[RMDB]
RNA sequence: GGGAACGACUCGAGUAGAGUCGAAAAGAUAUGGAGAUGAUAAGCUCGAUAAGACGCGUUCGGAAACGAACGGCGUCUUUUGACGAGCGAAACAUCUCCUAAGUCAAAACCGGGGUUCGCCCCGGAACUCAUUCAAUUAGUUCGCUAAUUGAAUGAGAAAAGAAACAACAACAACAAC
Reactivity to DMS in 0.01 (KOAc 150mM, MgCl2 10mM, bicine 150mM(pH8.5), 24C), signal-to-noise 5, nucleotides 027 to 126: g000a070u010a300u000g000g020a020g000a010u000g010a050u010a120a300g000c000u000c000g030a160u000a040a020g010a010c000g020c010g000u000u000c000g000g010a180a080a220c000g010a010a000c000g040g050c010g010u000c000u000u000u000u010g000a210c120g000a020g020c000g000a090a140a300c010a000u000c000u000c000c000u000a010a110g010u010c030a090a050a100a150c000c000g010g030g010g020u000u020c300g010c000c000c000c010g010g000a020a050
Reactivity to 2A3 in 0.01 (KOAc 150mM, MgCl2 10mM, bicine 150mM(pH8.5), 24C), signal-to-noise 3, nucleotides 027 to 126: g020a010u070a050u200g010g000a000g000a000u020g020a040u040a160a040g000c000u000c010g040a080u040a120a010g000a000c000g000c010g000u000u010c020g050g000a110a080a050c020g000a000a000c030g090g070c010g000u010c010u010u000u000u010g020a030c000g000a000g000c000g000a020a020a000c000a000u010c000u000c000c000u000a000a010g010u000c010a000a030a180a230c000c000g010g000g000g020u050u130c280g160c030c000c000c020g010g000a000a010
Annotation: Source: RMDB library TTRDES, as collected in RNAgym. Structure probing data (DMS and 2A3) for a 177-nucleotide construct. For DMS the reverse transcriptase was MarathonRT. The 2A3 profile rests on 8,260 reads. The reactions ran in a buffer of 150 mM KOAc, 10 mM MgCl2 and 150 mM bicine (pH 8.5), at 24 C.